[RMDB]
Structure probing data (2A3 and DMS) for a 177-nucleotide construct. The RNA was probed in 150 mM KOAc, 10 mM MgCl2 and 150 mM bicine (pH 8.5) at 24 C. Values cover nucleotides 27 to 126. High DMS reactivity at an A or C suggests that its Watson-Crick edge is free.

RNA sequence: GGGAACGACUCGAGUAGAGUCGAAAAGAUAUGGACGAUCCCAGGGAGGCGUGUCGGAAACGACAUCCAUCGAUCUGGAGAUCGUCCUAAGUCAAAAGGUGCAGUAAACUUCGGUUUACUGCACCAACCACAUGUCUACCUUCGGGUAGACAUGUGGAAAAGAAACAACAACAACAAC
Reactivity to 2A3 in 0.01 (KOAc 150mM, MgCl2 10mM, bicine 150mM(pH8.5), 24C), signal-to-noise 1, nucleotides 027 to 126: g000a000u050a020u070g000g010a010c010g020a010u000c000c000c020a000g090g210g020a010g000g000c090g030u020g020u000c000g000g020a050a050a000c010g000a000c000a030u000c000c010a140u250c000g070a110u050c000u030g040g000a300g000a090u000c010g000u010c000c000u010a010a000g010u020c020a000a020a000a170g000g020u000g010c000a010g010u040a030a000a010c020u100u240c300g060g000u020u020u010a000c010u000g000c010a000c000c000a000a010
Reactivity to DMS in 0.01 (KOAc 150mM, MgCl2 10mM, bicine 150mM(pH8.5), 24C), signal-to-noise 2, nucleotides 027 to 126: g000a060u000a280u000g010g020a000c030g010a040u000c000c000c000a000g000g000g030a110g000g000c300g020u000g000u000c020g010g000a070a060a240c000g000a000c020a000u010c060c030a190u000c080g000a100u000c000u010g010g010a220g010a030u020c000g010u000c000c000u000a000a080g000u000c030a090a070a090a060g000g000u000g000c010a020g030u010a000a000a000c000u000u010c200g030g030u000u000u000a000c000u000g010c000a010c000c010a000a020